[RMDB]
RNA sequence: GGGAACGACUCGAGUAGAGUCGAAAAGACGGCAUCGCCAACGUCGACAACAUCGAUGAUGCUGCCCUCUCGGCAGCGGGCUAUUUAUGCUGGCGUGGAAAGGAUCUCGCGACACCGCGAGGGUGGAGACUCUCUGUAAUUUCGAUUACAGAGAGUCAAAAGAAACAACAACAACAAC
Reactivity to DMS in 0.01 (KOAc 150mM, MgCl2 10mM, bicine 150mM(pH8.5), 24C), signal-to-noise 9, nucleotides 027 to 126: g010a140c050g010g030c020a050u010c150g030c020c030a130a210c070g000u000c010g010a060c120a090a130c090a300u000c020g000a040u000g010a140u010g010c000u000g000c020c000c180u000c170u010c130g000g000c030a030g000c010g010g000g010c050u000a100u000u010u000a050u020g010c030u000g000g010c040g010u000g010g000a050a060a100g010g000a120u010c000u000c010g010c010g010a160c200a150c140c010g010c020g000a030g010g000g020u000g010g000a300
Reactivity to 2A3 in 0.01 (KOAc 150mM, MgCl2 10mM, bicine 150mM(pH8.5), 24C), signal-to-noise 7, nucleotides 027 to 126: g060a010c030g010g000c010a050u060c050g000c030c020a040a040c040g010u000c010g020a030c040a300a020c010a090u060c020g050a040u070g020a050u150g010c000u000g000c000c010c000u080c050u060c060g020g000c010a000g000c030g000g000g000c020u110a120u180u290u060a110u180g020c030u020g010g050c040g030u060g030g110a100a080a040g080g030a060u020c000u000c010g000c000g110a150c070a060c200c040g000c020g000a010g010g000g030u060g020g020a080